[RMDB]
RNA sequence: GGGAACGACUCGAGUAGAGUCGAAAAUGUCGGCAAGCUCUAUAUAUGGACACUUACGAAGGGUUUUGGCUGUUUUGUAUCUCAAGCCGACUUUGAGUAUUUGAGGAAAAUACGACAGAAAAAACAAAUAGACCGGUAUCCUUCGGGAUACCGGUAAGAUUCGUCUCAUGUUCGCAUGAGACGAAUCAAAAGAAACAACAACAACAAC
Reactivity to DMS in 0.01 (KOAc 150mM, MgCl2 10mM, bicine 150mM(pH8.5), 24C), signal-to-noise 1, nucleotides 027 to 156: u000g030u000c010g040g000c000a040a130g060c080u020c000u000a100u000a170u000a140u000g020g000a150c090a040c040u000u000a090c100g010a160a060g000g020g000u000u000u010u000g070g040c000u000g020u000u000u010u010g060u000a060u000c020u000c040a090a280g000c020c010g000a050c010u000u000u000g020a240g010u000a000u000u040u010g000a260g020g000a170a040a060a060u000a020c000g000a240c040a060g010a000a050a040a100a070a110c070a040a110a140u020a090g020a040c000c000g020g020u000a010u000c010c000u010u020c300g080g030g000a040u010a000c000c000g000g020u010a000a040
Reactivity to 2A3 in 0.01 (KOAc 150mM, MgCl2 10mM, bicine 150mM(pH8.5), 24C), signal-to-noise 2, nucleotides 027 to 156: u080g020u000c000g000g000c080a110a020g010c030u010c010u070a060u020a030u010a080u170g050g030a040c030a030c080u070u170a020c030g170a140a120g080g030g040u080u060u050u100g040g000c000u000g020u010u040u030u030g020u070a170u250c020u010c060a020a000g000c010c020g000a000c000u010u010u030g020a020g010u000a010u000u020u030g040a050g000g220a020a010a030a060u020a020c030g040a010c020a020g210a030a090a020a000a020a020c070a010a140a080u120a040g110a010c000c000g010g010u000a010u020c010c000u000u040c090g000g000g000a000u000a000c000c000g010g000u000a000a000